[RMDB]
RNA sequence: GGGAACGACUCGAGUAGAGUCGAAAAUCUUUCUCUUGCCUGAUUGCCCUGGCCAGAACUUCCAACACUAUGUUGAAUAGGAGUGGUGAGAGAGGGCAUCCCUGUCUUGUGCCAGUUUUCAAAGGGAAUGCUUCCAGUUUUUGCCCAUUCAGUAUGAGGAAGAGGAAUGAUUCGUCAUUCCUCUUCCAAAAGAAACAACAACAACAAC
Reactivity to DMS in 0.01 (KOAc 150mM, MgCl2 10mM, bicine 150mM(pH8.5), 24C), signal-to-noise 2, nucleotides 027 to 156: u010c020u000u000u010c000u000c020u000u000g020c010c040u010g000a110u000u010g020c070c070c010u010g010g010c080c070a070g020a070a070c020u000u000c020c010a050a090c050a090c060u000a070u000g020u010u000g000a150a070u000a070g020g010a130g020u010g000g020u000g020a100g010a080g060a080g030g030g050c030a070u000c020c020c000u000g010u000c020u000u000g000u020g030c030c020a120g010u000u000u010u010c090a050a100a120g000g000g030a040a040u000g010c030u000u000c030c020a080g000u000u000u000u000u010g030c000c050c020a210u000u000c040a150g020u000a090u000g000a300
Reactivity to 2A3 in 0.01 (KOAc 150mM, MgCl2 10mM, bicine 150mM(pH8.5), 24C), signal-to-noise 1, nucleotides 027 to 156: u000c000u000u110u010c020u000c000u000u020g040c000c000u020g030a040u070u160g060c020c000c070u040g060g000c030c030a060g020a140a050c010u090u040c010c020a060a020c040a050c070u160a170u270g030u000u010g100a120a110u100a100g050g060a020g020u040g030g080u020g020a030g000a000g030a010g020g000g000c000a020u010c040c000c000u040g100u060c050u060u110g020u020g010c010c080a080g030u070u050u010u080c140a100a090a010g070g000g020a090a060u050g020c010u070u030c040c000a060g010u040u070u060u050u070g040c000c010c020a030u210u190c030a060g070u090a100u140g060a060

Source: RMDB library OK3TST, as collected in RNAgym. Chemical mapping of a 207-nucleotide RNA with DMS and 2A3. The RNA was probed in 150 mM KOAc, 10 mM MgCl2 and 150 mM bicine (pH 8.5) at 24 C. The 2A3 profile rests on 578 reads.